[RMDB]
RNA sequence: GGGAACGACUCGAGUAGAGUCGAAAAACUUUUUAUAUGAAGCUCCACUUUGUGUGAUGUUGGCUUCCACCUGUGGCUGUGAAUGGAACCUGCUGAGCAAAUGAACCCGGGGGUCAGGAAAGCAGGGAUCGCUGUAAAUGUUCGCAUUUACAGCGAUAAAAGAAACAACAACAACAAC
Reactivity to DMS in 0.01 (KOAc 150mM, MgCl2 10mM, bicine 150mM(pH8.5), 24C), signal-to-noise 1, nucleotides 027 to 126: a130c030u020u000u000u030u030a140u020a130u010g010a060a120g010c060u000c060c030a040c140u020u010u000g030u010g000u010g000a110u010g000u040u020g020g020c060u000u010c000c070a080c010c130u010g010u010g040g020c070u000g020u000g000a100a040u000g000g010a070a090c030c010u000g020c020u000g000a140g000c120a010a070a080u010g000a080a150c070c010c040g000g010g000g040g010u000c070a050g020g000a130a070a090g000c030a040g010g000g010